The data come from the RNA Mapping Database (RMDB), library M2PK50. Structure probing data (2A3 and DMS) for a 177-nucleotide construct. The reactions ran in a buffer of 150 mM KOAc, 10 mM MgCl2 and 150 mM bicine (pH 8.5), at 24 C.

[RMDB]
RNA sequence: GGGAACGACUCGAGUAGAGUCGAAAAGGAGCUUGAUUCGUCAAGCUCCAAAAGUUACAGACCCGAUUCGUAGGGUAAACAAGAAGCUAUGCACCGAGGCAAAAAGGAAUGGAUUCGUCCAUUCCAAGAGAAACAUAGUGUUCGCACUAUGUUUCUCAAAAGAAACAACAACAACAAC
Reactivity to 2A3 in 0.01 (KOAc 150mM, MgCl2 10mM, bicine 150mM(pH8.5), 24C), signal-to-noise 3, nucleotides 027 to 126: g000g000a000g010c010u000u000g000a000u040u040c040g040u000c080a000a000g000c000u000c000c000a000a000a030a000g010u000u050a050c020a050g090a090c010c020c020g060a220u130u140c070g050u120a070g000g000g000u040a060a070a000c040a040a020g130a050a010g020c010u040a030u140g010c010a030c050c060g030a050g090g000c080a010a030a020a060a050g000g000a010a000u000g000g010a000u040u040c160g040u000c040c010a000u000u020c010c000a000a000
Reactivity to DMS in 0.01 (KOAc 150mM, MgCl2 10mM, bicine 150mM(pH8.5), 24C), signal-to-noise 5, nucleotides 027 to 126: g010g000a010g000c000u000u010g000a020u000u010c220g020u000c000a010a010g000c010u000c000c000a010a010a050a110g000u010u000a110c200a160g010a080c010c010c010g000a170u000u000c140g020u000a080g010g000g010u010a040a070a080c130a070a080g010a080a090g000c030u000a050u000g000c090a080c030c040g000a070g010g000c110a020a030a040a100a070g000g000a000a000u000g000g000a040u000u000c180g020u000c000c000a010u000u000c010c000a050a050
2A3 adducts were read by reverse transcription with SuperScript II with manganese. High 2A3 reactivity points to a flexible backbone, as in loops and unpaired stretches.